[RMDB]
RNA sequence: GGGAACGACUCGAGUAGAGUCGAAAACAUAUGACGGAGAGUGGAACACUCAGCGGAAACGCAUCCAAUGUCUGAAGUCUUUAAUGGGUAUAACAGUCAGUAGACCCAGAUCCCAACAGACAAUAAACAUCCACUCCAACUUCGGUUGGAGUGGAUGAAAAGAAACAACAACAACAAC
Reactivity to 2A3 in 0.01 (KOAc 150mM, MgCl2 10mM, bicine 150mM(pH8.5), 24C), signal-to-noise 1, nucleotides 027 to 126: c020a010u200a080u140g030a010c050g000g020a010g020a010g060u000g080g180a160a050c050a000c060u080c040a020g000c000g040g000a000a030a000c020g060c030a010u000c010c040a060a030u070g000u000c000u030g050a090a030g030u000c020u010u070u030a060a030u030g010g060g020u010a080u070a160a100c060a030g280u200c000a000g050u190a000g070a040c000c000c000a020g010a020u030c010c000c020a000a010c000a010g010a000c000a070a060u140a070a100a000
Reactivity to DMS in 0.01 (KOAc 150mM, MgCl2 10mM, bicine 150mM(pH8.5), 24C), signal-to-noise 1, nucleotides 027 to 126: c080a150u000a070u000g000a070c080g010g040a010g000a010g050u000g000g020a050a180c050a100c070u000c000a190g020c090g000g000a140a020a080c000g000c000a300u000c000c070a050a020u000g030u000c040u050g070a240a100g010u000c040u000u000u000a160a180u030g000g000g000u000a010u010a000a040c070a150g040u000c190a110g000u000a040g000a070c020c000c000a000g000a260u000c040c030c000a060a100c040a000g000a000c030a100a150u060a110a050a040

The record gives the reactivity of an RNA of 177 nucleotides to 2A3 and DMS. 2A3 is a SHAPE reagent: it acylates the 2'-hydroxyl of flexible nucleotides of all four kinds. The data come from the RNA Mapping Database (RMDB), library M2PK90. For DMS, 470 sequencing reads were counted.